[RMDB]
RNA sequence: GGGAACGACUCGAGUAGAGUCGAAAAGUUAAAAAGUCCGUAGUCAUAGAAGGGCAAAGAGAGAUGCGAGGUCUCACAGUGCGAUGAUGGAGGAGCCGAUGGGGAACAUAGUAUACCAGGGCGAGAGGCUAUGCGAAUUCUUCGGAAUUCGCAUAGCAAAAGAAACAACAACAACAAC
Reactivity to DMS in 0.01 (KOAc 150mM, MgCl2 10mM, bicine 150mM(pH8.5), 24C), signal-to-noise 1, nucleotides 027 to 126: g000u000u020a120a060a080a160a050g030u000c040c030g010u000a050g000u000c070a020u050a060g030a200a130g000g000g020c070a040a040a030g050a180g020a110g000a020u060g000c000g020a070g020g030u040c010u000c040a110c140a050g000u000g010c000g020a050u000g040a110u000g100g000a130g000g000a070g050c010c050g000a080u000g000g000g000g020a000a030c080a050u000a050g020u000a080u020a060c010c040a050g010g000g040c030g000a020g010a050g050
The data come from the RNA Mapping Database (RMDB), library RFM100. Chemical mapping of a 177-nucleotide RNA with DMS. For DMS, 1,175 sequencing reads were counted. The RNA was probed in 150 mM KOAc, 10 mM MgCl2 and 150 mM bicine (pH 8.5) at 24 C. Reactivities are given for positions 27 through 126.